Record summary:
The data come from the RNA Mapping Database (RMDB), library RSTRND. This 207-nucleotide RNA was probed chemically with DMS and 2A3. The reactions ran in a buffer of 150 mM KOAc, 10 mM MgCl2 and 150 mM bicine (pH 8.5), at 24 C.
[RMDB]
RNA sequence: GGGAACGACUCGAGUAGAGUCGAAAAGGGGCCGACCGGUUUUGACAGGAUGUGUAAUGAUGUAUGUAAGCAUGCAGGCUCAUGGGAUGAGAGCCCUUGAAGAUAGUUCCGAAUCAUACUUGGCGAGUCUAACUACGCCAUGGCUGCUUUAUUUAGCGAUAGCAUCUGUGUUCGCACAGAUGCUAUCAAAAGAAACAACAACAACAAC
Reactivity to DMS in 0.01 (KOAc 150mM, MgCl2 10mM, bicine 150mM(pH8.5), 24C), signal-to-noise 2, nucleotides 027 to 156: g020g000g100g040c030c020g000a050c050c010g010g010u010u000u000u000g020a130c060a070g050g020a060u010g000u010g010u000a120a070u000g020a140u020g020u000a050u030g020u010a130a140g000c040a080u000g020c060a050g010g020c040u010c020a070u000g020g000g010a120u010g000a100g000a130g010c030c030c040u000u000g010a120a100g000a100u000a070g010u000u000c020c020g020a070a120u010c020a130u000a100c050u000u000g010g000c010g010a210g020u000c040u010a080a090c030u000a120c020g020c040c020a030u010g000g010c020u000g010c010u000u000u000a130u030u000u010a110g020c290
Reactivity to 2A3 in 0.01 (KOAc 150mM, MgCl2 10mM, bicine 150mM(pH8.5), 24C), signal-to-noise 3, nucleotides 027 to 156: g030g010g010g000c000c010g020a060c020c020g010g030u040u050u010u140g040a040c050a040g030g020a030u050g030u000g020u070a070a090u110g070a030u060g030u120a030u060g050u040a030a100g040c020a010u070g020c020a010g040g000c010u000c010a010u060g030g000g000a040u050g030a040g010a010g070c000c030c000u010u060g060a050a020g030a040u070a030g040u070u000c010c020g000a020a030u070c040a020u020a130c010u010u000g000g010c000g010a000g010u000c070u080a130a100c010u150a150c020g000c000c000a000u010g030g000c010u050g020c010u130u070u120a150u110u170u090a080g010c040